[RMDB]
RNA sequence: GGGAACGACUCGAGUAGAGUCGAAAAUCGUUAAAACAUCAACGCCAAUAAUAACUGGCAAAUCUAACAAUAACUUCGCUUUAGCUGCAUAAUAGUAGCUUAGCGUUCCUCCCUCCAUCGCCCAUGUGGUAGGGUAAGGGACUCACUUUAAGUGGGCGUUCUGUGGUAACUUCGGUUACCACAGAACAAAAGAAACAACAACAACAAC
Reactivity to 2A3 in 0.01 (KOAc 150mM, MgCl2 10mM, bicine 150mM(pH8.5), 24C), signal-to-noise 3, nucleotides 027 to 156: u070c010g010u020u050a030a120a010a070c070a170u170c080a070a060c120g020c020c030a030a020u160a140a030u120a140a060c130u030g010g000c010a090a030a000u100c120u100a040a080c070a080a090u190a100a050c090u090u040c010g000c010u090u110u210a000g000c000u010g000c000a010u090a260a050u080a300g000u000a000g000c000u000u050a000g000c000g000u030u010c000c000u000c000c000c000u000c000c000a000u000c000g000c000c000c000a000u000g020u000g000g000u130a010g000g000g000u070a150a050g000g010g060a060c010u010c060a130c020u090u080u050a080a000g010u020g000g000g000c010